Overview
Conditions: 150 mM KOAc, 10 mM MgCl2 and 150 mM bicine (pH 8.5), 24 C. This 207-nucleotide RNA was probed chemically with 2A3 and DMS. High DMS reactivity at an A or C suggests that its Watson-Crick edge is free. Source: RMDB library M2RFPK, as collected in RNAgym. For 2A3, 1,087 sequencing reads were counted. For DMS, 2,585 sequencing reads were counted.

[RMDB]
RNA sequence: GGGAACGACUCGAGUAGAGUCGAAAAUUUAACGCUGUUUUAUUGGCGCAAAGGUGUACGGAUAAACAACUAAUAAUUAAACCUUUUGUGUGCGAAACGUGGUUGUUUAACGUACUCUUUAAUCGCUUUGGGGAUGUGUCCUUCGGGACACAUCCAAUCCUGUCAGUAUGUUCGCAUACUGACAGGAAAAAGAAACAACAACAACAAC
Reactivity to 2A3 in 0.01 (KOAc 150mM, MgCl2 10mM, bicine 150mM(pH8.5), 24C), signal-to-noise 2, nucleotides 027 to 156: u060u060u060a140a020c050g030c060u010g070u070u090u010u070a130u060u140g060g000c050g000c020a060a050a000g060g000u030g010u000a000c020g020g030a150u030a040a000a010c000a010a000c010u040a070a110u090a090a030u110u170a130a090a080c010c040u040u150u290u120g210u130g030u040g080c160g030a160a040a030c120g010u030g000g020u000u000g000u000u000u000a020a000c000g000u000a000c000u000c000u010u050u040a090a090u020c030g000c050u020u070u130g120g020g000g000a000u000g000u000g000u000c000c000u040u020c060g020g000g000a000c000a000c000a000u000c000c000a000a000
Reactivity to DMS in 0.01 (KOAc 150mM, MgCl2 10mM, bicine 150mM(pH8.5), 24C), signal-to-noise 1, nucleotides 027 to 156: u000u000u010a160a090c070g020c020u000g010u010u020u000u010a150u030u040g030g000c040g040c160a100a060a070g020g010u000g020u010a000c030g000g000a230u000a030a040a060c000a010a040c020u000a070a100u000a090a130u020u000a100a160a090c010c030u000u010u010u020g040u010g000u000g030c020g000a070a070a090c170g040u000g010g040u000u000g000u000u000u000a010a050c020g010u000a000c000u000c020u000u010u000a050a090u000c030g000c000u010u010u010g020g000g030g030a010u010g010u000g010u000c000c000u000u010c290g040g070g000a010c000a020c020a000u020c020c020a000a020